This 207-nucleotide RNA was probed chemically with 2A3. Source: RMDB library OK3TST, as collected in RNAgym. The RNA was probed in 150 mM KOAc, 10 mM MgCl2 and 150 mM bicine (pH 8.5) at 24 C. 2A3 adducts were read by reverse transcription with SuperScript II with manganese.

RNA sequence: GGGAACGACUCGAGUAGAGUCGAAAAGGCGGACCUGGUGACCGCGUACGAGCAGACAGUGAAGGAGGAAGUGAACUUCCAGACCUCUUUUAACAACAACGUGCGCACGCUCAUCUCGCGGGAGGAGGUGGUGGUGGGGCUGAUGCACCUGUGGGACGUACACCUUCGAAUUCGUUCGAAGGUGUACAAAAGAAACAACAACAACAAC
Reactivity to 2A3 in 0.01 (KOAc 150mM, MgCl2 10mM, bicine 150mM(pH8.5), 24C), signal-to-noise 2, nucleotides 027 to 156: g080g000c020g000g100a030c000c070u200g000g000u050g060a050c010c000g000c040g000u030a040c010g000a050g000c090a050g100a220c000a010g000u030g100a040a000g010g000a040g040g020a110a040g080u120g170a100a120c080u090u050c070c030a030g090a150c010c000u000c030u020u100u030u250a110a070c040a050a000c010a010a040c040g020u040g050c030g000c030a050c200g000c000u010c000a050u060c020u000c040g050c080g030g000g010a070g030g000a090g000g090u120g010g020u100g000g100u220g000g000g020g040c080u090g000a150u160g040c000a050c120c040u090g010u080g030g000g040a000c060